[RMDB]
RNA sequence: GGGAACGACUCGAGUAGAGUCGAAAACGGCAUGAUACCACCGUUAUCGGGUCAACCGAGUAGUUGCAAAUGACAACAAUGCUCAGGGUUAUGCUCUCGCUGCCUAAUGGCGGUGCGGGAAACCCACAAAAGAUAUUGAUCUUCGGAUCAAUAUCAACCUAACGAGUUCGUUCGCGAACUCGUUAGGAAAAGAAACAACAACAACAAC
Reactivity to 2A3 in 0.01 (KOAc 150mM, MgCl2 10mM, bicine 150mM(pH8.5), 24C), signal-to-noise 3, nucleotides 027 to 156: c000g030g000c020a040u150g030a020u110a050c000c000a000c000c040g220u080u040a030u070c040g000g000g020u000c000a000a020c050c020g010a010g000u030a020g000u000u040g040c080a160a260a240u250g070a140c000a020a010c010a060a140u110g010c000u000c080a050g070g030g000u050u040a150u300g040c000u010c010u010c000g000c000u000g000c000c020u220a300a180u120g000g000c030g000g010u000g000c000g000g000g000a040a020a000c010c030c030a050c050a020a070a010a010g000a000u000a000u000u000g000a000u020c010u030u130c250g130g000a000u000c000a000a000u000a000u000c000a000a000
Notes: The record gives the reactivity of an RNA of 207 nucleotides to 2A3. 2A3 adducts were read by reverse transcription with SuperScript II with manganese. The reactions ran in a buffer of 150 mM KOAc, 10 mM MgCl2 and 150 mM bicine (pH 8.5), at 24 C.